[RMDB]
RNA sequence: GGGAACGACUCGAGUAGAGUCGAAAAUGGGAGAUUUUUGAGAGGUGGAAAGGGCAGGACAUAGCUCUUCGUUGUUUGUAAGGGAAGAGGAUGAUGGAAGAGAUUUCUGGCUUGGGUUCCAUCACCAGAGGUGGGAACUGAAGACAAAGACACAGUACGUUUUAAUCCUAUUCGUAGGAUUAAAACGAAAAGAAACAACAACAACAAC
Reactivity to 2A3 in 0.01 (KOAc 150mM, MgCl2 10mM, bicine 150mM(pH8.5), 24C), signal-to-noise 3, nucleotides 027 to 156: u070g000g050g000a040g000a060u050u070u080u170u140g070a070g010a020g060g020u060g020g000a100a050a030g020g010g010c020a000g050g020a020c010a070u120a030g010c000u000c000u090u070c070g040u000u030g050u050u130u120g070u090a090a050g020g010g010a030a010g010a010g010g020a040u040g000a020u050g020g010a020a040g020a010g000a030u040u060u090c040u080g070g000c030u000u040g090g000g000u050u000c000c010a080u100c030a010c030c050a040g030a040g110g010u060g020g010g000a000a040c010u020g030a030a000g020a010c050a050a100a000g010a020c030a010c000a120g130u110a000
Reactivity to DMS in 0.01 (KOAc 150mM, MgCl2 10mM, bicine 150mM(pH8.5), 24C), signal-to-noise 1, nucleotides 027 to 156: u010g030g020g010a130g040a100u000u000u000u010u000g010a080g070a070g010g000u010g040g060a050a080a090g060g020g080c080a050g010g010a050c100a060u000a130g010c050u010c000u020u000c050g010u010u010g010u010u010u000g030u010a110a050g000g020g020a030a030g010a130g000g010a020u000g010a060u000g010g000a060a050g020a150g000a060u000u000u010c000u000g010g030c020u000u000g030g010g020u000u010c000c010a010u000c050a060c100c150a130g010a040g010g030u000g030g010g020a040a060c070u000g000a050a090g020a080c030a010a030a070g010a100c070a070c050a140g020u010a130
Structure probing data (2A3 and DMS) for a 207-nucleotide construct. 2A3 adducts were read by reverse transcription with SuperScript II with manganese. It was measured as part of the RMDB library OK3TST.